Chemical mapping of a 177-nucleotide RNA with DMS and 2A3. 2A3 adducts were read by reverse transcription with SuperScript II with manganese. Values cover nucleotides 27 to 126. The reactions ran in a buffer of 150 mM KOAc, 10 mM MgCl2 and 150 mM bicine (pH 8.5), at 24 C. The 2A3 profile rests on 1,280 reads. The data come from the RNA Mapping Database (RMDB), library OK2TST.
[RMDB]
RNA sequence: GGGAACGACUCGAGUAGAGUCGAAAAGUCGUCGAUAGCAAUGGUCCAGUCAGUACCUACGUGGCGCUUGACGGAGCGAAUGGUGCGAUCAACGUUGGUAACAGCUUGGUUCUUAGCAGACUGUCCGCGAACACCCCGUAUUCGUACGGGGUGUUCGAAAAGAAACAACAACAACAAC
Reactivity to DMS in 0.01 (KOAc 150mM, MgCl2 10mM, bicine 150mM(pH8.5), 24C), signal-to-noise 2, nucleotides 027 to 126: g010u010c020g010u010c080g010a090u010a080g000c060a100a120u020g010g020u010c030c010a090g020u010c020a110g010u000a090c010c020u010a070c110g010u010g030g030c040g020c020u000u020g010a220c090g020g030a070g020c060g000a120a110u000g010g000u000g020c050g010a060u000c080a060a020c110g020u000u000g000g010u010a070a060c010a100g020c030u010u000g010g000u000u000c060u000u000a170g000c010a080g010a070c050u000g020u000c020c040g010
Reactivity to 2A3 in 0.01 (KOAc 150mM, MgCl2 10mM, bicine 150mM(pH8.5), 24C), signal-to-noise 1, nucleotides 027 to 126: g070u050c040g000u020c010g050a140u060a030g000c000a050a140u080g010g030u000c010c010a000g030u090c000a020g010u030a010c010c000u050a030c070g050u080g070g000c000g000c050u030u070g000a040c000g110g050a060g130c050g010a030a060u120g010g030u040g010c040g040a030u120c030a090a000c020g040u050u080g020g060u050a060a090c030a050g000c000u040u100g040g040u020u120c010u070u070a050g060c020a030g000a070c030u030g020u040c030c000g010